[RMDB]
RNA sequence: GGGAACGACUCGAGUAGAGUCGAAAAGAUAUGGAGCGGCGCAACAGCUGGUUGGUCGGAAACGACCACCAGACAUGCCUCGCUCCUAAGUCAAAGGCAAAUGCCAAGUUCGCUUGGCAUUUGCCAACUGAUACAUCCACUUCGGUGGAUGUAUCAGAAAAGAAACAACAACAACAAC
Reactivity to DMS in 0.01 (KOAc 150mM, MgCl2 10mM, bicine 150mM(pH8.5), 24C), signal-to-noise 2, nucleotides 027 to 126: g000a040u010a300u010g040g000a010g020c000g040g020c300g000c000a030a050c260a160g000c010u000g000g000u000u010g020g030u000c000g000g020a040a050a120c000g010a000c000c010a020c010c010a000g000a030c120a130u000g000c010c000u000c000g000c000u000c000c000u000a000a070g000u000c030a080a140a180g000g000c010a020a040a010u010g010c020c000a020a000g010u000u010c150g030c010u000u000g000g000c000a010u000u000u000g000c000c000a010a010
Reactivity to 2A3 in 0.01 (KOAc 150mM, MgCl2 10mM, bicine 150mM(pH8.5), 24C), signal-to-noise 2, nucleotides 027 to 126: g010a000u040a020u090g000g000a020g020c010g050g000c010g000c040a030a300c040a280g120c040u010g010g050u220u290g020g010u000c020g000g010a030a020a020c010g000a000c000c010a000c000c010a000g020a060c040a020u060g000c010c010u010c000g010c000u010c020c000u000a000a000g000u010c020a120a080a060g000g000c010a010a000a010u010g000c000c010a000a010g010u040u170c300g030c150u000u030g000g000c000a000u000u020u020g000c000c000a020a000
Structure probing data (DMS and 2A3) for a 177-nucleotide construct. DMS adducts were read by reverse transcription with MarathonRT. For DMS, 1,744 sequencing reads were counted. The reactions ran in a buffer of 150 mM KOAc, 10 mM MgCl2 and 150 mM bicine (pH 8.5), at 24 C. Values cover nucleotides 27 to 126. It was measured as part of the RMDB library TTRDEL.